[RMDB]
RNA sequence: GGGAACGACUCGAGUAGAGUCGAAAACGAAUGCAGCUGUAAGAAGAUCUGUUCCAGCUCCAGUAACUCCACCAAACAUGAACACCGUGACUACAGCAGCAGAUACAGAUGACACUACAUUUAGAAGAAAAUCACGGAGGUUCGCCUCCGUGAUUUUAAAAGAAACAACAACAACAAC
Reactivity to 2A3 in 0.01 (KOAc 150mM, MgCl2 10mM, bicine 150mM(pH8.5), 24C), signal-to-noise 2, nucleotides 027 to 126: c000g010a000a000u100g020c010a010g000c020u050g030u300a170a080g060a080a020g000a070u070c070u050g040u070u000c010c000a000g060c020u000c020c020a030g000u000a190a090c000u010c000c000a010c080c050a040a010a000c100a060u110g070a050a030c090a000c040c000g040u070g020a040c040u090a100c110a010g020c010a020g000c000a010g010a020u020a000c000a000g170a190u080g070a010c000a010c000u090a040c050a050u170u150u040a160g000a170a040g120
Reactivity to DMS in 0.01 (KOAc 150mM, MgCl2 10mM, bicine 150mM(pH8.5), 24C), signal-to-noise 1, nucleotides 027 to 126: c080g000a070a010u000g030c030a150g030c100u000g000u000a040a130g000a160a030g000a110u000c000u000g000u000u000c120c100a040g060c010u000c070c010a050g000u100a080a020c030u040c080c000a040c070c000a040a070a040c190a070u010g020a010a110c040a090c030c000g000u000g000a140c080u000a040c050a080g000c010a120g010c040a060g000a000u000a020c040a000g000a050u020g000a050c050a220c000u000a000c070a000u010u000u000a180g000a200a190g000
Overview:
Chemical mapping of a 177-nucleotide RNA with 2A3 and DMS. The reactions ran in a buffer of 150 mM KOAc, 10 mM MgCl2 and 150 mM bicine (pH 8.5), at 24 C. The data come from the RNA Mapping Database (RMDB), library OK1LIB. DMS adducts were read by reverse transcription with MarathonRT.